Structure probing data (DMS and 2A3) for a 177-nucleotide construct. Reactivities are given for positions 27 through 126. For DMS, 1,139 sequencing reads were counted. It was measured as part of the RMDB library OK2TRN. The RNA was probed in 150 mM KOAc, 10 mM MgCl2 and 150 mM bicine (pH 8.5) at 24 C. DMS adducts were read by reverse transcription with MarathonRT.
RNA sequence: GGGAACGACUCGAGUAGAGUCGAAAAGGUUAAUUCCAAGGCCAACCAAUUAACCUUCCGGAAUUGGCCAAUUCCAACCUUGGCCGGAAUUGGAACCUUAACCGGAAGGCCAACCAAUUGGCCUUCCCUCAUAGGUUGCCUUCGGGCAACCUAUGAGAAAAGAAACAACAACAACAAC
Reactivity to DMS in 0.01 (KOAc 150mM, MgCl2 10mM, bicine 150mM(pH8.5), 24C), signal-to-noise 2, nucleotides 027 to 126: g020g020u000u000a110a130u000u010c030c020a070a050g010g010c010c000a020a040c150c070a050a060u010u010a060a300c000c000u000u000c020c000g000g010a110a240u000u000g010g000c020c020a010a010u000u000c010c010a030a070c050c110u000u010g050g060c080c080g000g030a030a000u000u000g010g000a040a110c010c010u000u000a080a210c020c020g000g000a010a000g000g010c010c010a080a110c160c130a150a230u000u000g030g000c000c000u010u020c020c010
Reactivity to 2A3 in 0.01 (KOAc 150mM, MgCl2 10mM, bicine 150mM(pH8.5), 24C), signal-to-noise 2, nucleotides 027 to 126: g040g020u040u050a010a030u300u000c030c000a060a040g010g000c000c010a020a020c010c020a000a020u030u010a040a020c010c000u020u000c000c000g040g000a090a140u060u030g000g030c000c030a000a010u010u000c000c000a030a040c060c060u200u270g200g020c090c090g020g000a010a010u000u020g090g030a220a290c020c000u070u090a070a060c000c000g010g000a020a000g010g000c000c000a000a010c030c020a000a070u000u010g020g010c020c000u000u020c000c000